[RMDB]
RNA sequence: GGGAACGACUCGAGUAGAGUCGAAAAGAACGUCAGCGUAGAAGCCUACGGCGAUAUUGCAGAUCGCAAUCUAUCAUGGCUUGAUUUGAUGUUCAGAGAGCAUGGUGAUAUAACGUUCACUGUGGCGGAUCAACUAGUUAUUCGUAAUUGGUUGAUCAAAAGAAACAACAACAACAAC
Reactivity to 2A3 in 0.01 (KOAc 150mM, MgCl2 10mM, bicine 150mM(pH8.5), 24C), signal-to-noise 9, nucleotides 027 to 126: g000a000a000c000g010u000c010a010g020c040g090u140a040g100a260a010g010c010c020u110a080c120g140g010c060g020a010u020a050u060u190g080c070a070g060a280u100c050g010c010a030a040u040c040u180a110u110c050a090u140g010g000c000u020u020g030a100u140u030u060g010a010u010g000u010u010c020a010g030a000g000a010g130c010a010u020g000g030u010g030a010u040a010u040a240a140c160g070u040u010c010a000c010u010g010u020g080g090c060g030
Reactivity to DMS in 0.01 (KOAc 150mM, MgCl2 10mM, bicine 150mM(pH8.5), 24C), signal-to-noise 9, nucleotides 027 to 126: g000a010a000c000g020u000c000a020g010c200g010u030a110g010a030a010g010c010c000u010a150c280g010g010c100g000a020u000a030u020u030g010c170a140g010a080u020c110g010c000a060a050u030c160u030a070u030c090a100u020g000g010c000u000u000g000a140u020u020u010g000a010u000g010u000u000c000a120g010a120g000a090g010c000a010u000g000g010u000g000a020u010a090u030a120a130c270g010u010u000c000a010c000u000g010u000g000g010c100g000
The record gives the reactivity of an RNA of 177 nucleotides to 2A3 and DMS. The 2A3 profile rests on 158,401 reads. Conditions: 150 mM KOAc, 10 mM MgCl2 and 150 mM bicine (pH 8.5), 24 C. 2A3 is a SHAPE reagent: it acylates the 2'-hydroxyl of flexible nucleotides of all four kinds.